The record gives the reactivity of an RNA of 207 nucleotides to 2A3. The reactions ran in a buffer of 150 mM KOAc, 10 mM MgCl2 and 150 mM bicine (pH 8.5), at 24 C. It was measured as part of the RMDB library RNAMAK.
RNA sequence: GGGAACGACUCGAGUAGAGUCGAAAAACAAAUGGUUCGCCAUUUGUAAAAAAGAUAUGGAGCAAUCAUGACUAUCGAUGAAAUCCACUCGGAAACGAGUGGAUGGAGAUAGCAUGAGUUGCUCCUAAGUCAAAAAACGGAUCUUUCGAGAUCCGAACGCAAAAAAUACGUUCGCGUAUUUUUUGCGAAAAGAAACAACAACAACAAC
Reactivity to 2A3 in 0.01 (KOAc 150mM, MgCl2 10mM, bicine 150mM(pH8.5), 24C), signal-to-noise 2, nucleotides 027 to 156: a000c010a020a010a000u020g000g050u020u090c210g090c070c000a020u000u000u020g010u030a080a160a000a000a030a050g050a020u130a030u150g020g000a000g030c000a050a010u010c000a000u030g200a300c020u010a000u020c000g300a260u000g000a000a020a000u000c000c000a000c000u000c000g010g010a050a110a130c040g010a000g010u000g000g010a000u000g000g000a000g000a000u000a000g000c000a000u000g000a000g020u000u000g000c000u010c000c000u000a000a010g000u010c010a020a010a020a050a050a160c020g000g000a000u000c010u040u210u150c240g200a030g000a020u000c000c000g000a030a020